[RMDB]
RNA sequence: GGGAACGACUCGAGUAGAGUCGAAAAAAGUUCACUAAAGCUAAUUGACACACAACGGCCACGGGCCAAUAGGAGAGAUGGGAUGAGCUUGGAUGUUUGGCUUACCAUGGGGGAUGAGACGGUUUUCGAGUGGAACAUCACUCAUAACCUUCGGCCAGACAGUGUUACAGUUCGCUGUAACACUGUCAAAAGAAACAACAACAACAAC
Reactivity to 2A3 in 0.01 (KOAc 150mM, MgCl2 10mM, bicine 150mM(pH8.5), 24C), signal-to-noise 2, nucleotides 027 to 156: a000a000g090u100u060c080a050c090u160a120a030a000g030c040u060a090a100u130u170g060a030c040a010c010a000c010a120a100c100g000g030c020c010a140c130g060g040g000c010c020a050a070u100a020g010g010a060g020a000g010a010u040g010g020g050a080u090g000a000g040c020u050u020g040g020a050u050g110u020u050u040g030g000c010u000u030a040c030c030a050u060g020g000g010g010g010a010u030g000a020g010a020c040g010g060u010u050u000u100c110g000a000g000u010g070g000a060a070c030a070u140c000a020c010u010c010a000u050a020a020c000c020u020u080c020g050g000c010c000a010
Reactivity to DMS in 0.01 (KOAc 150mM, MgCl2 10mM, bicine 150mM(pH8.5), 24C), signal-to-noise 1, nucleotides 027 to 156: a070a100g010u010u000c040a150c050u010a080a100a100g040c030u020a050a140u000u000g000a130c060a130c090a070c050a080a130c000g010g020c030c010a100c070g000g090g030c000c130a070a070u010a040g020g020a050g040a050g010a060u010g030g010g000a060u010g000a070g050c020u010u010g030g010a040u000g000u000u000u010g020g030c040u000u000a080c050c010a140u000g030g010g040g030g010a130u020g020a190g000a040c100g050g020u000u000u000u010c150g030a080g030u010g020g000a080a100c120a090u020c000a000c010u000c010a060u000a040a040c030c000u010u000c030g040g040c060c020a210
Notes
This 207-nucleotide RNA was probed chemically with 2A3 and DMS. For 2A3 the reverse transcriptase was SuperScript II with manganese. The data come from the RNA Mapping Database (RMDB), library OK3TST. Conditions: 150 mM KOAc, 10 mM MgCl2 and 150 mM bicine (pH 8.5), 24 C.